[RMDB]
RNA sequence: GGGAACGACUCGAGUAGAGUCGAAAAGAUAUGGAGAGACAUGCUAUCGGCUGCGAAGAACUCGGAAACGAGGGAGCAGCCCUCUAGCAACAGCUCUCCUAAGUCAAAACUCUAGUUCGCUAGAGAAUCUUGAUAAUAUCUUCGGAUAUUAUCAAGAAAAAGAAACAACAACAACAAC
Reactivity to DMS in 0.01 (KOAc 150mM, MgCl2 10mM, bicine 150mM(pH8.5), 24C), signal-to-noise 7, nucleotides 027 to 126: g000a040u000a300u010g000g000a020g000a030g010a060c090a180u000g010c000u010a020u010c300g000g000c000u000g010c000g000a060a130g000a120a220c000u010c000g010g000a080a100a230c010g010a020g000g000g000a060g000c000a000g000c000c000c020u010c110u000a010g000c010a020a070c190a130g000c010u000c000u000c000c000u000a010a080g000u010c040a100a070a100a140c010u000c000u000a010g010u000u010c230g010c000u000a010g000a010g000a100a070
Reactivity to 2A3 in 0.01 (KOAc 150mM, MgCl2 10mM, bicine 150mM(pH8.5), 24C), signal-to-noise 4, nucleotides 027 to 126: g010a030u080a060u150g010g000a010g010a000g000a040c040a160u080g000c000u030a050u300c130g000g000c010u010g020c030g170a300a040g010a080a030c000u010c020g010g020a030a090a050c010g010a000g020g000g000a020g010c000a000g000c000c000c000u010c020u000a000g000c000a030a070c060a040g020c000u000c000u000c000c000u000a050a000g030u000c020a020a030a050a220c010u000c000u010a010g030u080u080c300g000c170u010a000g010a010g020a040a110
Notes:
Structure probing data (DMS and 2A3) for a 177-nucleotide construct. The reactions ran in a buffer of 150 mM KOAc, 10 mM MgCl2 and 150 mM bicine (pH 8.5), at 24 C.